Structure probing data (DMS and 2A3) for a 177-nucleotide construct. Values are in units of 0.01, from 0 to 300, in steps of 10. 2A3 adducts were read by reverse transcription with SuperScript II with manganese. For DMS the reverse transcriptase was MarathonRT.
[RMDB]
RNA sequence: GGGAACGACUCGAGUAGAGUCGAAAAAGCGGCACGAGCAACUGGCGCAGCUUGCUGCGGCUUCGACUGCGCAGUCGUGUGCGCAGGAGUUUGCAGCAGAUCCUGGUACGGCUGCUGAGAAGAAGCAGUCCACUGCUGCAUUCGUGCAGCAGUGGACAAAAGAAACAACAACAACAAC
Reactivity to DMS in 0.01 (KOAc 150mM, MgCl2 10mM, bicine 150mM(pH8.5), 24C), signal-to-noise 2, nucleotides 027 to 126: a040g020c010g010g010c000a060c120g010a120g000c120a070a070c110u000g010g000c060g010c060a080g000c060u000u000g000c000u000g010c020g010g000c010u000u000c040g000a190c050u000g020c030g020c010a020g010u010c300g020u010g010u000g010c010g010c000a030g000g000a060g010u000u000u020g010c000a010g030c000a030g000a090u000c050c050u000g040g010u020a090c130g000g020c020u010g020c010u030g020a220g000a160a150g010a090a060g000c090a120
Reactivity to 2A3 in 0.01 (KOAc 150mM, MgCl2 10mM, bicine 150mM(pH8.5), 24C), signal-to-noise 1, nucleotides 027 to 126: a000g020c020g030g070c030a020c140g030a060g060c030a020a150c030u040g080g000c070g010c020a020g000c040u030u030g000c030u000g010c010g020g000c000u050u030c090g200a190c030u060g000c030g010c030a000g050u190c110g080u110g040u000g140c030g000c020a000g060g040a050g050u050u170u300g010c010a020g000c010a010g010a070u050c020c020u010g040g070u130a040c060g000g030c000u000g000c020u030g000a050g030a180a010g030a040a000g000c030a030